Conditions: 150 mM KOAc, 10 mM MgCl2 and 150 mM bicine (pH 8.5), 24 C. This 207-nucleotide RNA was probed chemically with 2A3. For 2A3 the reverse transcriptase was SuperScript II with manganese. It was measured as part of the RMDB library VIROID.

[RMDB]
RNA sequence: GGGAACGACUCGAGUAGAGUCGAAAACCGGCGAAACGCGGUUCGUCUGCUGAGGAUGCCUCCGCUAGUCGAGCGGACUUGGUCUCUUCCGCCCAAAGCCCUUUUUCUUUCAACUGAGCUUGUUCCAACGCGCCCCGCGAGUGGAAUCCCCGGAACCGGUGAAGUUGAAGUUCGCUUCAACUUCACCAAAAGAAACAACAACAACAAC
Reactivity to 2A3 in 0.01 (KOAc 150mM, MgCl2 10mM, bicine 150mM(pH8.5), 24C), signal-to-noise 2, nucleotides 027 to 156: c010c000g010g010c000g060a050a050a010c120g000c030g040g010u030u000c020g030u000c040u100g040c020u050g050a010g030g030a070u060g020c000c030u060c000c030g010c030u070a070g140u180c160g090a000g000c010g010g000a010c050u180u270g000g040u010c010u010c000u060u010c020c030g050c010c030c010a050a090a020g010c020c020c000u030u080u020u050u050c050u030u090u060c040a080a060c060u080g030a010g040c030u060u040g030u080u050c030c000a070a040c020g010c010g020c050c010c000c050g010c020g010a040g010u030g040g050a040a050u030c020c000c000c040g030g050a030a060c070c080